[RMDB]
RNA sequence: GGGAACGACUCGAGUAGAGUCGAAAAACCCAACCGGCAACUGGAGGCCAUCAACAUGUUCAUCGACGAAGUGGUUCUCGCAGGGAUUCUUACAGUAGGCCUCAUGGUCGCUUUCUUCGGUGGGGUCUCAUGAUUUAGGUUUCGACCUAAAUCAUGAAAAAGAAACAACAACAACAAC
Reactivity to DMS in 0.01 (KOAc 150mM, MgCl2 10mM, bicine 150mM(pH8.5), 24C), signal-to-noise 8, nucleotides 027 to 126: a050c000c000c000a120a070c120c070g000g000c080a100a090c040u000g000g000a040g000g010c020c010a070u010c080a120a130c160a090u020g000u010u020c090a090u020c080g010a090c070g010a110a120g010u010g010g010u010u030c010u010c010g000c070a050g000g000g010a090u000u010c060u010u010a100c170a090g010u010a100g010g010c010c010u010c040a070u020g010g010u010c050g010c150u000u020u020c050u020u000c010g010g020u000g000g000g010g000u010c060
Reactivity to 2A3 in 0.01 (KOAc 150mM, MgCl2 10mM, bicine 150mM(pH8.5), 24C), signal-to-noise 9, nucleotides 027 to 126: a000c010c000c000a010a030c030c020g050g010c020a060a020c040u050g040g010a010g030g000c020c010a060u100c030a020a130c030a100u150g050u140u120c040a090u100c110g110a090c040g030a130a030g040u040g060g000u190u130c020u020c030g070c030a030g050g000g030a050u120u070c040u060u130a060c040a080g090u150a070g050g010c000c000u040c030a070u100g050g020u040c010g050c090u070u170u060c040u060u070c030g040g010u020g010g010g000g010u010c010